[RMDB]
RNA sequence: GGGAACGACUCGAGUAGAGUCGAAAAGUAUGUUCGCAUACGAUAGAUCCUAAGUCCUGAGGCAAGCUAAGACAGUGGUUGUCAGCGUCGGAAACGACGCUUGGAUUUACCAUCGAGCUUGACCGCGGGAUAUGGAGACAUGGCCGUUCGCGGCCAAAGCUGUAUAAAUUUUCGAAUUUAUACAGCUAAAAGAAACAACAACAACAAC
Reactivity to 2A3 in 0.01 (KOAc 150mM, MgCl2 10mM, bicine 150mM(pH8.5), 24C), signal-to-noise 5, nucleotides 027 to 156: g010u010a010u040g040u050u130c220g000c130a000u010a020c010g040a030u110a110g120a080u020c010c000u020a090a030g020u010c000c000u020g010a020g020g000c000a000a010g000c000u120a160a040g100a120c100a120g070u020g040g020u010u020g020u020c000a000g000c000g000u000c000g030g020a120a090a060c010g000a000c000g000c000u000u050g020g000a000u120u070u220a010c000c000a030u130c040g040a010g010c000u050u050g040a300c000c000g000c010g000g020g000a000u020a020u050g000g010a040g020a030c100a120u090g000g000c000c000g030u060u090c270g010c030g100g000c000c010a050a030
Reactivity to DMS in 0.01 (KOAc 150mM, MgCl2 10mM, bicine 150mM(pH8.5), 24C), signal-to-noise 2, nucleotides 027 to 156: g020u000a020u000g000u000u010c300g030c020a020u010a010c010g020a220u000a120g010a150u000c010c000u000a060a200g010u010c000c010u000g010a050g010g000c020a010a040g000c000u000a140a160g020a150c300a070g030u010g020g010u000u010g020u000c010a080g000c010g070u000c000g030g000a160a150a300c000g000a020c000g020c000u000u000g010g010a050u040u010u000a020c010c000a040u000c040g010a060g000c020u010u000g000a050c000c000g000c010g000g000g010a020u000a110u010g030g020a070g010a100c070a080u000g010g010c000c000g040u000u000c180g040c030g000g000c000c000a000a020
Source information: Source: RMDB library RNAMAK, as collected in RNAgym. An RNA of 207 nucleotides, treated with 2A3 and DMS and read out base by base. Reactivities are given for positions 27 through 156. DMS adducts were read by reverse transcription with MarathonRT. The reactions ran in a buffer of 150 mM KOAc, 10 mM MgCl2 and 150 mM bicine (pH 8.5), at 24 C. For 2A3 the reverse transcriptase was SuperScript II with manganese.